[RMDB]
RNA sequence: GGGAACGACUCGAGUAGAGUCGAAAAACGCUAAUCUCCGAAACUCGGUCGUAGUUCGGAUUGCGGAUUGAAACUCAUCCGCAUGAAGCUGGAUUCGGUAGUAAUCGCGCCUCAGAAGGGCGCGGUGCAACUACACAUUCUUCGGAAUGUGUAGUUGAAAAGAAACAACAACAACAAC
Reactivity to DMS in 0.01 (KOAc 150mM, MgCl2 10mM, bicine 150mM(pH8.5), 24C), signal-to-noise 9, nucleotides 027 to 126: a080c110g020c090u020a060a110u020c070u010c010c010g010a060a060a070c040u000c030g010g000u020c100g020u020a060g010u020u020c020g020g000a090u010u000g020c000g000g010a020u000u020g010a110a150a140c280u020c070a040u000c000c000g010c010a010u010g010a240a090g000c040u000g010g000a080u010u010c040g010g000u010a060g010u010a100a020u000c010g000c000g020c000c000u000c060a140g010a180a300g000g000g000c000g010c000g010g010u000g010
Reactivity to 2A3 in 0.01 (KOAc 150mM, MgCl2 10mM, bicine 150mM(pH8.5), 24C), signal-to-noise 9, nucleotides 027 to 126: a000c040g010c080u070a070a070u080c030u010c030c020g050a090a060a050c060u040c040g090g050u070c060g130u130a050g050u100u100c020g030g010a020u000u040g000c000g000g020a010u020u180g100a150a080a020c080u060c070a010u000c000c000g000c000a000u030g030a020a010g010c040u060g010g030a090u120u050c030g030g030u090a040g030u050a070a030u020c000g000c000g010c000c000u080c030a130g060a190a070g040g000g000c000g000c000g000g000u000g000

The record gives the reactivity of an RNA of 177 nucleotides to DMS and 2A3. 2A3 adducts were read by reverse transcription with SuperScript II with manganese. The RNA was probed in 150 mM KOAc, 10 mM MgCl2 and 150 mM bicine (pH 8.5) at 24 C. Reactivities are given for positions 27 through 126.